[RMDB]
RNA sequence: GGGAACGACUCGAGUAGAGUCGAAAACGAUCAGUACGAGUGCGUACUGAUCGAAGCUAGUGGUGACACUAGCAAACAGCAGAUGUACAUAGCCGGAAUGUAUAACAACGUAGUGAACGCGCCAUACUACGACUGCUGUAACCGGCAAGGCGCGAAAGCAAGUACGUGUCUUCGGACACGUACUUGCAAAAGAAACAACAACAACAAC
Reactivity to 2A3 in 0.01 (KOAc 150mM, MgCl2 10mM, bicine 150mM(pH8.5), 24C), signal-to-noise 1, nucleotides 027 to 156: c000g000a000u000c000a000g000u030a030c050g040a030g290u150g270c070g020u000a000c050u000g000a000u000c000g000a020a000g000c000u000a000g000u030g060g110u070g030a000c000a000c000u010a000g000c000a000a030a000c000a000g000c000a000g080a070u050g010u110a090c020a060u130a010g140c050c030g000g090a090a000u130g100u010a110u030a170a180c190a030a000c000g000u000a000g000u040g000a120a000c060g000c000g000c000c000a030u000a050c000u000a000c030g030a010c000u010g000c000u010g030u210a000a070c000c000g000g090c050a040a130g000g000c000g000c050g000a060a000a010